[RMDB]
RNA sequence: GGGAACGACUCGAGUAGAGUCGAAAAGAUAUGGAAUGCCACCCACCGGUAAUACUCGGAAACGAGUGCCAGGUGGUGGCCAUUCCUAAGUCAAACCAUAACGAGGGGUUCGCCCCUCGUUAUGGAAUCUAAAUGAGAAGUUCGCUUCUCAUUUAGAAAAAGAAACAACAACAACAAC
Reactivity to 2A3 in 0.01 (KOAc 150mM, MgCl2 10mM, bicine 150mM(pH8.5), 24C), signal-to-noise 3, nucleotides 027 to 126: g000a010u050a030u110g000g000a010a010u000g000c000c010a040c070c080c010a010c010c010g010g000u120a240a160u100a300c010u000c000g030g000a080a060a030c000g010a010g010u010g020c030c050a150g000g000u000g000g000u000g000g000c000c010a000u000u000c000c000u000a100a000g050u020c030a050a060a110c010c000a000u010a000a000c010g010a000g020g030g000g000u060u080c220g180c000c000c000c000u000c000g000u000u000a000u000g000g000a000a000
Reactivity to DMS in 0.01 (KOAc 150mM, MgCl2 10mM, bicine 150mM(pH8.5), 24C), signal-to-noise 6, nucleotides 027 to 126: g010a040u010a300u010g000g010a010a010u000g000c010c000a010c080c030c030a020c010c030g000g010u000a050a070u020a080c000u010c000g000g000a090a090a130c000g000a010g050u000g010c010c010a070g050g010u000g000g010u000g000g000c120c040a000u000u000c000c000u010a030a130g010u000c030a140a120a200c000c000a020u000a000a010c000g010a000g000g000g000g020u000u020c250g010c000c000c000c000u000c000g000u000u000a000u000g000g000a040a040